[RMDB]
RNA sequence: GGGAACGACUCGAGUAGAGUCGAAAACUUAUUGAUAGCGAUUUUUAUGAUGAAUAGUUGGAGCGGUAUUCAGAGCGGGCAUAACGCAUUUCGUCCAGUCUCAAAAUCAAAACCAGCAUCGAGUGAGCCUGAUAAACUUGUUCGCAAGUUUAUCAGGAAAAGAAACAACAACAACAAC
Reactivity to DMS in 0.01 (KOAc 150mM, MgCl2 10mM, bicine 150mM(pH8.5), 24C), signal-to-noise 2, nucleotides 027 to 126: c050u000u000a120u000u020g010a100u000a090g000c020g000a050u000u000u020u000u020a050u030g000a210u010g010a110a090u000a050g000u000u000g010g010a070g050c020g020g020u000a020u000u010c160a090g010a160g050c250g010g020g000c160a050u000a150a100c100g000c050a080u000u000u000c090g000u000c020c040a090g000u000c060u000c040a040a040a070a060u000c080a020a020a120a100c010c040a090g010c020a030u000c040g020a080g010u000g010a070g020
Reactivity to 2A3 in 0.01 (KOAc 150mM, MgCl2 10mM, bicine 150mM(pH8.5), 24C), signal-to-noise 1, nucleotides 027 to 126: c010u060u030a040u130u080g020a070u030a050g040c000g030a020u010u060u000u000u160a050u130g050a010u050g000a060a110u050a040g090u100u020g010g000a030g000c050g050g030u070a140u090u190c050a050g000a030g090c090g000g030g060c010a050u040a140a050c020g000c050a050u000u110u150c040g010u000c000c030a050g090u000c000u040c020a030a080a030a030u050c000a000a000a010a100c020c000a000g030c000a040u040c020g010a030g070u020g030a010g050
An RNA of 177 nucleotides, treated with DMS and 2A3 and read out base by base. It was measured as part of the RMDB library RFMREP. Values cover nucleotides 27 to 126.